[RMDB]
RNA sequence: GGGAACGACUCGAGUAGAGUCGAAAACGGUAUUGGUCAAGGCUAUACCGACAGCGCACCUUCAAAAGGGCGCUUAUUCCCCGGCCAAGCGCCGAAAUAUGAAUAGACACCGCUGGGCUGGUAGGGCAAAACAUGGCGAUCUUCGGAUCGCCAUGAACAUUGGCACAUACUUCGGUAUGUGCCAAUGAAAAGAAACAACAACAACAAC
Reactivity to DMS in 0.01 (KOAc 150mM, MgCl2 10mM, bicine 150mM(pH8.5), 24C), signal-to-noise 1, nucleotides 027 to 156: c020g010g120u000a030u000u000g100g070u000c040a050a100g020g000c010u000a090u000a070c000c040g040a100c090a080g010c030g020c050a130c020c010u000u000c190a030a170a080a090g000g000g000c010g000c010u000u000a040u000u000c000c000c010c050g000g000c040c010a060a020g060c070g000c010c060g000a020a060a090u000a160u000g000a120a220u000a150g000a160c040a100c120c000g070c010u000g000g010g020c040u010g060g000u020a080g030g020g010c070a040a090a070a130c040a020u010g000g060c000g010a010u010c020u000u010c300g090g000a000u000c010g010c000c000a000u000g000a030a170
Reactivity to 2A3 in 0.01 (KOAc 150mM, MgCl2 10mM, bicine 150mM(pH8.5), 24C), signal-to-noise 2, nucleotides 027 to 156: c020g000g010u010a040u060u230g030g000u110c100a120a110g150g000c010u010a000u020a000c010c010g010a010c030a040g000c000g000c030a300c100c010u070u090c130a020a050a190a020g020g000g000c000g000c000u000u000a000u000u000c000c010c000c010g000g000c010c000a060a030g040c070g030c110c080g050a020a060a000u300a100u130g100a080a030u130a100g070a020c050a020c050c040g000c030u000g000g080g000c030u020g000g060u060a080g020g000g070c020a060a020a040a070c000a000u000g020g010c000g010a020u010c000u040u090c170g060g000a000u000c000g010c000c000a000u000g000a000a000